[RMDB]
RNA sequence: GGGAACGACUCGAGUAGAGUCGAAAAGGGGUCUUAGUUGUCAGUGAGGAUCUUGGAUUUACACACUGAAGCCUCCACGGUGUGUUGUCAGACUCACUUGGAUUUACUAAGACGGAGGCACCCAAAAUCUAACCCUUUGUUCGCAAAGGGUUAGAAAGAGUUAACCUACGUUCGCGUAGGUUAACUCAAAAGAAACAACAACAACAAC
Reactivity to 2A3 in 0.01 (KOAc 150mM, MgCl2 10mM, bicine 150mM(pH8.5), 24C), signal-to-noise 1, nucleotides 027 to 156: g100g000g030g000u010c010u000u010a000g010u020u050g010u040c050a020g000u000g000a000g050g080a130u070c140u250u300g190g000a070u090u220u280a000c000a010c000a000c020u000g010a070a010g010c000c000u000c000c000a000c000g000g010u000g000u000g020u000u010g000u010c030a000g030a080c000u010c000a000c000u000u140g140g010a000u000u120u120a010c000u000a000a000g000a000c000g000g000a000g020g000c000a020c030c000c000a090a090a000a100u020c000u000a000a000c000c000c000u010u010u010g010u080u040c180g000c070a000a010a000g010g000g000u000u000a000g000a000a000a000